Conditions: 150 mM KOAc, 10 mM MgCl2 and 150 mM bicine (pH 8.5), 24 C.
Structure probing data (DMS and 2A3) for a 177-nucleotide construct.
For DMS, 1,563 sequencing reads were counted.
The data come from the RNA Mapping Database (RMDB), library RFM100.

RNA sequence: GGGAACGACUCGAGUAGAGUCGAAAACGACCGAUAGUGAACAAGUACCGCGAGGGAAAGGUGAAAAGAACCGCUGUGAGCGGAGUGAAAUAGAACCUGAAACCGUAUGUCUACAAAGUGUCAGAGCCAGUCAUACGACGUUCGCGUCGUAUGACUGAAAAGAAACAACAACAACAAC
Reactivity to DMS in 0.01 (KOAc 150mM, MgCl2 10mM, bicine 150mM(pH8.5), 24C), signal-to-noise 1, nucleotides 027 to 126: c140g060a100c000c050g010a000u000a070g000u000g050a100a040c050a040a050g000u010a090c050c040g000c040g000a180g000g010g010a170a150a050g010g000u000g000a130a040a090a060g000a110a160c000c040g000c000u070g000u050g000a150g090c050g000g000a040g000u030g000a110a090a010u000a020g030a180a000c010c030u010g000a050a290a180c020c090g030u030a050u000g000u030c040u020a050c020a000a030a170g000u000g000u000c040a030g000a200g000c080
Reactivity to 2A3 in 0.01 (KOAc 150mM, MgCl2 10mM, bicine 150mM(pH8.5), 24C), signal-to-noise 2, nucleotides 027 to 126: c140g060a040c010c010g080a070u090a140g090u050g080a120a030c000a120a000g040u040a000c060c070g000c000g070a130g010g020g020a000a040a040g040g010u040g010a100a000a030a000g130a040a000c000c000g000c010u050g060u140g180a040g050c030g000g000a050g060u020g030a020a050a000u090a030g040a060a060c050c050u010g030a220a020a000c010c000g080u090a050u090g060u020c000u040a090c040a020a180a050g070u100g010u140c080a050g020a030g170c040